[RMDB]
Structure probing data (2A3 and DMS) for a 207-nucleotide construct. 2A3 adducts were read by reverse transcription with SuperScript II with manganese.

RNA sequence: GGGAACGACUCGAGUAGAGUCGAAAACAACCUGGGAGUUACGUCCGGAUAUUGCGCCAGGGGCAAUAGAACGGUAGACAUCAACUGAUGCGAGAGCAUCUCAACUUAUGGACCUUAGUGUAUCGCAAGACGACAGGUCCUGUCGGAAUUGCGUAGAGAUCGACUAGUGAUUCGUCACUAGUCGAUCAAAAGAAACAACAACAACAAC
Reactivity to 2A3 in 0.01 (KOAc 150mM, MgCl2 10mM, bicine 150mM(pH8.5), 24C), signal-to-noise 2, nucleotides 027 to 156: c070a010a030c000c000u020g000g060g000a070g040u100u120a060c050g000u010c010c000g010g010a020u040a020u010u050g040c070g020c060c000a060g080g010g080g000c000a010a010u040a020g070a140a030c040g070g000u040a090g060a050c010a100u120c040a030a060c040u040g000a000u010g020c000g010a080g000a000g050c000a020u000c000u030c090a040a100c020u150u060a070u220g060g010a050c000c000u040u150a110g040u070g050u240a080u050c000g020c030a020a010g020a060c030g000a000c000a020g130g130u060c000c010u000g000u000c010g010g070a190a070u060u000g010c020g000u020a020g000a000
Reactivity to DMS in 0.01 (KOAc 150mM, MgCl2 10mM, bicine 150mM(pH8.5), 24C), signal-to-noise 1, nucleotides 027 to 156: c040a180a270c010c010u020g040g000g010a190g020u000u000a050c040g000u000c030c070g020g040a110u010a030u000u000g000c070g100c190c130a190g010g020g070g090c110a010a150u030a110g010a080a070c040g000g050u010a090g000a060c110a150u030c080a100a180c070u000g010a040u000g030c040g000a300g020a280g040c040a030u010c000u000c150a070a170c090u000u000a010u010g020g010a020c000c010u000u000a100g040u000g030u000a070u010c040g040c120a160a040g010a180c010g000a080c100a030g010g020u000c090c010u000g000u000c030g000g000a130a220u000u010g070c010g050u030a120g000a280

Values cover nucleotides 27 to 156.